This 177-nucleotide RNA was probed chemically with 2A3 and DMS. Reactivities are rounded to 0.1 and cut off at 0 and 3.
RNA sequence: GGGAACGACUCGAGUAGAGUCGAAAAGCUCGGAGCGUAAUCGCGUCUUGACGUGAGUAGGGAUUGACUAGACUGUAGGCUAUCCCAGUGUGCAUAGCGCACAAUACGCUGAUCUACAGUCAACAAAACACACAGGCAAAUUCGUUUGCCUGUGUGUAAAAGAAACAACAACAACAAC
Reactivity to 2A3 in 0.01 (KOAc 150mM, MgCl2 10mM, bicine 150mM(pH8.5), 24C), signal-to-noise 2, nucleotides 027 to 126: g070c020u020c030g040g040a020g000c010g000u020a010a010u020c010g020c000g020u000c020u080u240g150a020c000g030u010g000a010g020u060a120g000g010g020a020u010u070g040a040c030u010a070g010a010c000u020g010u020a010g010g010c010u030a010u010c000c000c000a000g000u000g000u020g000c030a100u160a290g110c060g000c040a000c010a000a010u020a000c020g000c010u000g000a040u000c000u000a000c000a000g000u010c000a000a000c010a010a070a030
Reactivity to DMS in 0.01 (KOAc 150mM, MgCl2 10mM, bicine 150mM(pH8.5), 24C), signal-to-noise 3, nucleotides 027 to 126: g000c020u000c020g000g020a040g010c000g020u000a040a120u000c000g010c000g010u000c100u010u000g010a030c010g040u000g000a020g000u010a180g010g000g000a010u000u020g010a090c170u010a110g000a020c000u000g000u000a000g000g000c110u000a030u000c000c000c010a090g000u010g000u000g010c000a140u030a190g020c220g000c000a010c010a050a040u000a000c020g010c010u010g000a080u010c010u000a000c020a010g020u010c000a140a100c190a060a030a060
About this RNA:
For 2A3 the reverse transcriptase was SuperScript II with manganese. The 2A3 profile rests on 4,615 reads. The RNA was probed in 150 mM KOAc, 10 mM MgCl2 and 150 mM bicine (pH 8.5) at 24 C. Values cover nucleotides 27 to 126.